[RMDB]
Structure probing data (2A3) for a 207-nucleotide construct.
RNA sequence: GGGAACGACUCGAGUAGAGUCGAAAACAGAAUUUAGGAUUAAACAGCUUCGCCACUUUCUCAAUAUCAACAAGGUAGCCAGCAUUGAAGCCGAUUUCCUCUGUUGGCAAGGUCUGCUUCGGAAUGACGCGAUCAAUAUCAGGGAAUCGCCCGUCAACUUCCUGAUUGAGUUCGCUCAAUCAGGAAGAAAAGAAACAACAACAACAAC
Reactivity to 2A3 in 0.01 (KOAc 150mM, MgCl2 10mM, bicine 150mM(pH8.5), 24C), signal-to-noise 2, nucleotides 027 to 156: c030a020g090a090a050u050u190u220a180g010g010a080u100u110a150a080a060c000a010g030c010u130u120c060g020c010c020a100c030u030u060u000c060u000c020a120a100u080a110u150c000a010a050c020a050a010g060g020u020a040g070c020c010a010g000c050a010u000u150g020a040a000g040c090c090g060a040u030u030u040c000c000u030c070u050g030u060u080g030g000c010a020a010g070g000u010c000u090g000c000u060u030c060g070g060a020a020u080g020a010c010g040c030g020a040u000c000a090a090u090a010u280c060a050g040g020g020a070a000u000c020g060c090c060c040g050u020c010a040a090
Reactivities are given for positions 27 through 156.